[RMDB]
RNA sequence: GGGAACGACUCGAGUAGAGUCGAAAAGGCUGUUAUCCAUCAAAGCAAUAAGUUCCAUAUUUGCAAACCCCGUUUUGAGAGUGUGGAAUUUCAGGUCCAAGGGUUUGCCAUUCUUUGGUGAGGACUAAUAUGAAACACACUUCGGUGUGUUUCAUAUAAAAGAAACAACAACAACAAC
Reactivity to 2A3 in 0.01 (KOAc 150mM, MgCl2 10mM, bicine 150mM(pH8.5), 24C), signal-to-noise 1, nucleotides 027 to 126: g090g010c060u060g060u210u110a010u060c030c050a000u020c030a130a000a030g040c080a080a180u120a130a000g000u050u010c010c010a030u040a040u090u050u060g000c010a000a000a020c000c130c010c080g050u000u000u070u160g030a060g010a010g020u100g010u050g090g000a010a050u030u070u070c080a100g000g090u020c010c020a040a030g090g030g010u030u100u050g010c020c000a050u080u040c000u060u120u020g020g010u010g000a120g000g000a010c000u020a000
Reactivity to DMS in 0.01 (KOAc 150mM, MgCl2 10mM, bicine 150mM(pH8.5), 24C), signal-to-noise 3, nucleotides 027 to 126: g010g020c040u010g000u000u000a080u010c050c010a050u010c060a030a060a060g000c170a070a080u010a030a100g000u000u000c010c010a050u000a080u010u000u000g020c030a000a010a030c020c100c070c140g010u000u000u000u000g000a100g020a040g020u000g050u000g000g010a050a040u000u000u000c120a070g010g000u000c060c040a120a110g000g000g030u000u000u000g020c030c130a060u000u010c050u010u000u000g000g030u010g000a160g000g010a050c080u000a060
The record gives the reactivity of an RNA of 177 nucleotides to 2A3 and DMS. Conditions: 150 mM KOAc, 10 mM MgCl2 and 150 mM bicine (pH 8.5), 24 C. In probing experiments dimethyl sulfate is read out at A N1 and C N3, which are open when not base-paired.